[RMDB]
RNA sequence: GGGAACGACUCGAGUAGAGUCGAAAAUCCCCCCUGCGGGCUCCCCCCAUAAGAUGACGAGGACCCCACUCAUCGGGGUCCGCAGUCUCAUCCUUUCUUACCUGAUGGCCGGCAUGGUCCCAGCCUCCUAGUAUCCUCUUCGGAGGAUACAAAAGAAACAACAACAACAAC
Reactivity to 2A3 in 0.01 (KOAc 150mM, MgCl2 10mM, bicine 150mM(pH8.5), 24C), signal-to-noise 4, nucleotides 027 to 129: u000c020c000c000c000c000c010u010g030c020g030g000g000c010u040c000c010c000c000c000c000a040u040a120a090g030a050u120g010a010c020g020a060g000g000a000c000c010c030c020a040c060u250c070a180u220c170g010g000g000g000u000c000c000g010c030a000g020u000c000u000c020a040u050c000c020u060u110u020c010u100u060a150c020c020u100g070a090u080g080g000c020c010g020g000c040a000u100g020g000u010c000c000c000a020g010c010c000u000c010c000u020a030
Reactivity to DMS in 0.01 (KOAc 150mM, MgCl2 10mM, bicine 150mM(pH8.5), 24C), signal-to-noise 6, nucleotides 027 to 129: u000c000c000c020c050c020c010u020g020c100g000g020g050c060u000c000c000c000c000c000c000a060u070a020a080g020a050u030g020a040c010g020a230g040g010a000c000c000c000c000a160c260u050c200a110u010c160g010g010g020g020u000c020c020g020c120a110g000u030c050u000c030a150u040c060c080u020u020u010c090u040u040a080c070c070u030g010a130u010g000g000c030c050g050g000c070a060u030g010g020u010c040c030c030a140g000c020c000u020c000c020u050a150
An RNA of 170 nucleotides, treated with 2A3 and DMS and read out base by base. For DMS, 18,820 sequencing reads were counted. 2A3 adducts were read by reverse transcription with SuperScript II with manganese. 2A3 is a SHAPE reagent: it acylates the 2'-hydroxyl of flexible nucleotides of all four kinds.